[RMDB]
RNA sequence: GGGAACGACUCGAGUAGAGUCGAAAAAAUUCGCCAGCGGUGGGAAAAUGGGAAACGUAGCGCUGGAAAUACCAUUGCCCGCGCUCUGUCUCGGUCGGCUUCGGCAGGGCGACAUUGCGCGCGGUGACUACCCAUUUAGUUUCGACUAAAUGGGUAGAAAAGAAACAACAACAACAAC
Reactivity to 2A3 in 0.01 (KOAc 150mM, MgCl2 10mM, bicine 150mM(pH8.5), 24C), signal-to-noise 6, nucleotides 027 to 126: a000a000u070u040c040g020c020c000a010g010c020g130g140u070g030g090g060a070a100a080a200u180g090g020g080a090a090a020c100g120u040a040g060c000g000c020u000g000g020a010a030a010u090a020c010c010a040u020u120g010c000c000c000g000c000g000c000u000c000u010g040u020c010u010c080g300g110u010c010g050g040c040u140u090c070g060g000c010a040g050g030g020c020g000a000c000a010u000u040g010c010g000c000g020c100g000g010u010g010a020
Reactivity to DMS in 0.01 (KOAc 150mM, MgCl2 10mM, bicine 150mM(pH8.5), 24C), signal-to-noise 5, nucleotides 027 to 126: a060a090u000u000c140g010c010c010a030g020c020g010g000u000g000g010g000a030a050a070a110u010g010g010g010a150a100a130c070g010u010a070g010c020g010c010u010g010g000a050a030a040u000a150c040c030a130u000u010g010c020c000c010g000c000g010c000u000c010u010g000u000c080u000c030g010g030u000c020g010g000c190u000u010c120g010g000c000a030g000g000g000c060g010a010c020a020u000u000g010c010g020c020g020c140g030g000u000g010a100
An RNA of 177 nucleotides, treated with 2A3 and DMS and read out base by base. The reactions ran in a buffer of 150 mM KOAc, 10 mM MgCl2 and 150 mM bicine (pH 8.5), at 24 C. Reactivities are rounded to 0.1 and cut off at 0 and 3.